RNA sequence: GGGAACGACUCGAGUAGAGUCGAAAAGAUAUGGAAUCAAUCACCCGAUCAGCGAAGAACAGGCGUAACAUCCAGUCGGAAACGACUGGUGGCCUGGGAGCUGCAGAGGGUGAUUGAUUCCUAAGUCCUUAAUAAAAGUCUUCGGACUUUUAUUAAGAAAAGAAACAACAACAACAAC
Reactivity to DMS in 0.01 (KOAc 150mM, MgCl2 10mM, bicine 150mM(pH8.5), 24C), signal-to-noise 2, nucleotides 027 to 126: g010a100u020a280u010g010g030a000a000u000c000a010a010u000c000a010c000c000c010g000a300u000c000a010g000c000g010a090a120g020a220a260c010a000g000g050c000g020u010a010a030c200a050u000c000c000a010g000u010c000g000g030a190a130a140c010g020a010c010u010g010g010u000g000g000c000c000u000g000g020g020a050g010c000u000g030c210a000g020a300g010g000g020u000g000a010u000u000g000a010u000u000c000c000u000a030a150g010u000c030
Chemical mapping of a 177-nucleotide RNA with DMS.
The DMS profile rests on 1,375 reads.
DMS adducts were read by reverse transcription with MarathonRT.